[RMDB]
RNA sequence: GGGAACGACUCGAGUAGAGUCGAAAAGUCGGGCGCUCUGCACACUGCUUGCAUUCAGCGCGCGCCUGCACUGCUUGCAUUCCAGGGCAAUGGCUCAGUCGACGGCAACGGCGCCGCUCUACGCCGGAGACGGACAUAACUUCGGUUAUGUCCGUCUAAAAGAAACAACAACAACAAC
Reactivity to DMS in 0.01 (KOAc 150mM, MgCl2 10mM, bicine 150mM(pH8.5), 24C), signal-to-noise 3, nucleotides 027 to 126: g010u010c030g030g000g000c030g000c020u000c110u000g020c020a060c120a170c120u000g010c130u000u000g040c030a060u000u010c150a050g040c030g040c200g010c100g010c030c030u000g000c030a060c030u010g000c090u010u000g010c040a100u000u000c060c050a070g000g010g000c030a060a040u010g010g020c010u000c060a110g020u010c040g010a160c020g010g000c050a120a180c010g000g010c010g000c030c040g010c060u000c080u000a090c040g010c000c020g020g000
Reactivity to 2A3 in 0.01 (KOAc 150mM, MgCl2 10mM, bicine 150mM(pH8.5), 24C), signal-to-noise 2, nucleotides 027 to 126: g000u010c010g010g030g010c020g000c020u060c070u140g000c060a040c010a050c160u110g040c050u070u080g000c010a030u060u100c060a020g030c010g000c010g000c010g060c060c000u050g000c040a020c030u080g050c030u010u050g020c020a070u090u100c050c040a040g000g030g000c030a130a170u140g070g000c040u010c090a000g050u050c040g020a110c030g020g000c020a040a060c050g040g000c020g000c000c000g050c040u020c010u050a030c040g000c020c000g020g000
Conditions: 150 mM KOAc, 10 mM MgCl2 and 150 mM bicine (pH 8.5), 24 C. Structure probing data (DMS and 2A3) for a 177-nucleotide construct. 2A3 adducts were read by reverse transcription with SuperScript II with manganese.